[RMDB]
RNA sequence: GGGAACGACUCGAGUAGAGUCGAAAAAUUGGACUAUUACUUCCAACUGAAGAUGAUAAAAUGAUUUUUAAUAUUCCGAUUCGUACUAUUGAGUAUAAAUAUGGACAAGCGAUUUAUGGAGUCGGAGCGGACUAGUGUCUUUCGAGACACUAGUCCGAAAAGAAACAACAACAACAAC
Reactivity to DMS in 0.01 (KOAc 150mM, MgCl2 10mM, bicine 150mM(pH8.5), 24C), signal-to-noise 1, nucleotides 027 to 126: a060u000u000g010g000a300c070u000a000u000u010a040c000u000u000c000c230a160a230c210u050g000a050a060g000a110u000g000a020u000a000a000a120a100u000g000a000u000u000u000u000u000a120a150u020a100u020u000c000c000g000a130u000u000c000g050u040a040c040u000a020u000u000g000a280g000u000a020u020a020a110a050u060a080u030g070g010a000c130a120a110g010c000g010a000u000u000u000a050u100g010g000a000g000u000c020g000g000a010g010
Reactivity to 2A3 in 0.01 (KOAc 150mM, MgCl2 10mM, bicine 150mM(pH8.5), 24C), signal-to-noise 2, nucleotides 027 to 126: a010u050u020g000g060a090c090u000a040u050u100a010c050u210u000c140c120a240a220c200u160g000a070a100g160a200u120g080a000u160a010a040a000a020u110g040a240u080u000u020u070u060a260a220u090a300u170u090c000c000g000a020u000u000c000g020u070a040c030u010a010u010u070g050a070g040u110a070u040a110a290a000u150a110u100g070g060a020c030a000a190g000c000g000a090u000u040u020a050u140g010g000a000g000u000c000g000g000a030g010